[RMDB]
RNA sequence: GGGAACGACUCGAGUAGAGUCGAAAAAUCGUAUUGUGGCGCUGGAGUGGUUGCCGGUGGAAUUACUGCUGGCGCUCGGCAUCGUGCCUUACGGCGUGGCGGAUACCAUCAACUAUCGCCUGUGGGAUGAGCGAUACGGUUUCGACCGUAUCGCUCAAAAAGAAACAACAACAACAAC
Reactivity to DMS in 0.01 (KOAc 150mM, MgCl2 10mM, bicine 150mM(pH8.5), 24C), signal-to-noise 1, nucleotides 027 to 126: a030u030c060g010u000a040u040u030g030u000g020g000c060g000c060u010g000g000a090g010u000g000g010u020u000g040c060c000g000g020u000g000g000a300a140u030u020a110c030u000g030c020u000g020g010c020g010c020u010c070g000g050c030a140u010c070g000u000g010c020c050u020u000a150c130g010g010c040g060u000g000g000c140g000g000a130u010a060c130c080a060u020c110a040a010c100u000a050u000c150g000c000c000u000g000u000g000g000g040a050
The data come from the RNA Mapping Database (RMDB), library OK2TST. The record gives the reactivity of an RNA of 177 nucleotides to DMS. Reactivities are given for positions 27 through 126. The DMS profile rests on 947 reads.